Chemical mapping of a 177-nucleotide RNA with 2A3 and DMS. The 2A3 profile rests on 1,408 reads. Reactivities are given for positions 27 through 126. The RNA was probed in 150 mM KOAc, 10 mM MgCl2 and 150 mM bicine (pH 8.5) at 24 C.

[RMDB]
RNA sequence: GGGAACGACUCGAGUAGAGUCGAAAACUCUUGUAAUGGGAUGGUUUUCCAAAGAAAUUUGAUGCAUUACUUUUUCAAUGGCAAGAAAACCUUUUUCCGAAAUGGUGUGAUUUUGAAAAUCAAUAUCGAGUGCUUAUUAUUUCGAUAAUAAGCACUCAAAAGAAACAACAACAACAAC
Reactivity to 2A3 in 0.01 (KOAc 150mM, MgCl2 10mM, bicine 150mM(pH8.5), 24C), signal-to-noise 1, nucleotides 027 to 126: c010u000c000u020u060g080u100a140a080u070g050g000g020a000u000g010g030u060u000u000u000c030c020a020a010a000g070a000a120a020u050u020u060g040a020u080g000c010a030u080u050a070c000u020u060u000u070u060c030a040a040u080g070g010c010a050a030g000a060a060a010a020c010c000u000u000u010u020u040c030c010g050a080a080a060u180g040g060u030g060u050g070a050u040u050u080u090g130a120a070a000a070u050c020a030a020u160a030u230c010
Reactivity to DMS in 0.01 (KOAc 150mM, MgCl2 10mM, bicine 150mM(pH8.5), 24C), signal-to-noise 4, nucleotides 027 to 126: c090u000c010u010u010g010u000a120a090u010g010g010g010a020u000g000g010u000u000u000u000c020c030a020a030a150g010a110a080a150u000u010u000g000a130u010g020c140a040u000u000a050c020u000u000u010u000u000c030a030a130u000g010g010c090a040a120g000a030a040a080a050c020c020u020u000u000u010u010c030c030g000a080a070a080u010g010g020u000g000u000g000a030u000u000u010u020g020a080a100a060a010u000c020a050a110u010a060u000c110